[RMDB]
Notes
Structure probing data (DMS and 2A3) for a 177-nucleotide construct. The 2A3 profile rests on 952 reads. 2A3 adducts were read by reverse transcription with SuperScript II with manganese.
RNA sequence: GGGAACGACUCGAGUAGAGUCGAAAAACUGGAGAGGAAAUCUAGAAUUUGCCCCUGCCAACAUGUGUGUUGCCUCUUCUUAUCAGCCUUCUCAUUCUGUCUUGACUUAGGGCCUCUCCUAUCAGACGGCACUAAGGUAAUUCGUUACCUUAGUGCCAAAAGAAACAACAACAACAAC
Reactivity to DMS in 0.01 (KOAc 150mM, MgCl2 10mM, bicine 150mM(pH8.5), 24C), signal-to-noise 2, nucleotides 027 to 126: a090c120u000g010g010a010g010a060g000g000a040a120a090u010c040u000a080g000a090a140u000u010u000g000c050c020c010c060u010g020c040c010a090a070c100a040u010g030u010g020u010g030u010u010g000c040c010u000c050u000u000c040u010u000a090u010c080a080g010c040c020u000u000c020u000c030a120u010u000c050u000g010u000c040u000u010g010a050c080u000u000a060g000g000g000c020c000u000c020u000c010c010u000a090u000c090a080g000a300c170
Reactivity to 2A3 in 0.01 (KOAc 150mM, MgCl2 10mM, bicine 150mM(pH8.5), 24C), signal-to-noise 1, nucleotides 027 to 126: a000c040u070g000g030a010g000a050g000g060a030a130a170u050c020u070a050g120a230a250u130u050u180g030c000c000c010c020u000g010c010c010a030a020c050a080u100g110u000g050u050g040u190u120g030c030c000u000c000u000u000c010u020u130a120u050c000a000g000c010c010u050u030c000u000c030a130u100u090c000u010g060u010c020u030u080g030a080c060u040u060a020g020g000g030c020c000u000c010u010c000c000u050a100u130c020a010g080a050c020